Structure probing data (2A3) for a 177-nucleotide construct. The reactions ran in a buffer of 150 mM KOAc, 10 mM MgCl2 and 150 mM bicine (pH 8.5), at 24 C. Values cover nucleotides 27 to 126. High 2A3 reactivity points to a flexible backbone, as in loops and unpaired stretches.
[RMDB]
RNA sequence: GGGAACGACUCGAGUAGAGUCGAAAACUGCGCUCCCCUGCUAGAACCUCCAAACAAGCUCUCAAGGUCCAUUUGUAGGAGAACGUAGGGUAGUCAAGCUUCCAAGACUCCAGACACAUCCAAAUGAGAGUACCUCACGGUUCGCCGUGAGGUACUCAAAAGAAACAACAACAACAAC
Reactivity to 2A3 in 0.01 (KOAc 150mM, MgCl2 10mM, bicine 150mM(pH8.5), 24C), signal-to-noise 1, nucleotides 027 to 126: c040u020g000c010g000c020u000c040c000c000c050u000g020c000u050a050g040a110a050c000c000u000c000c000a050a090a120c090a260a020g040c040u020c000u040c050a090a070g080g000u010c060c050a100u040u050u050g030u080a040g000g040a010g020a000a000c010g030u160a180g000g000g000u020a010g020u050c070a100a000g040c030u000u000c000c010a010a040g000a040c000u050c000c000a080g040a000c010a000c000a080u080c040c000a050a050a060u130g000a050